An RNA of 177 nucleotides, treated with 2A3 and DMS and read out base by base.

RNA sequence: GGGAACGACUCGAGUAGAGUCGAAAAACGUUGUGUUAUAUUGAAGAACAGAUCUAAAUUUAGACAAAUUAAUAACUUGGGUUUGUGAUAAUUUGUAAAAUACAUAUGCUUGUGACAAGUAGGAUAACUAUUCCAGUGGAUUCGUCCACUGGAAUAGAAAAGAAACAACAACAACAAC
Reactivity to 2A3 in 0.01 (KOAc 150mM, MgCl2 10mM, bicine 150mM(pH8.5), 24C), signal-to-noise 2, nucleotides 027 to 126: a000c010g030u010u000g030u000g000u010u080a070u030a050u120u170g070a160a090g060a070a000c000a010g130a030u020c000u110a010a000a220u190u150u050a080g030a050c060a000a020a150u080u090a060a170u090a050a000c010u010u000g020g010g020u090u060u030g020u030g010a130u050a230a070u120u060u040g020u100a050a090a040a050u060a040c030a050u150a000u150g000c000u000u000g030u040g190a080c030a000a000g000u030a080g050g090a020u000a050a100
Reactivity to DMS in 0.01 (KOAc 150mM, MgCl2 10mM, bicine 150mM(pH8.5), 24C), signal-to-noise 2, nucleotides 027 to 126: a120c180g000u000u000g000u000g020u000u000a070u000a100u020u020g000a230a070g000a140a030c010a040g000a010u010c010u020a000a030a070u010u010u040a090g000a110c070a080a010a150u030u000a060a080u040a030a060c170u000u000g030g000g000u000u010u000g000u000g000a080u000a010a110u000u000u000g000u030a020a030a040a030u000a000c060a030u020a050u000g010c050u000u000g010u000g000a080c100a040a050g010u010a040g000g000a070u010a060a120
Source information: Source: RMDB library OK1LIB, as collected in RNAgym.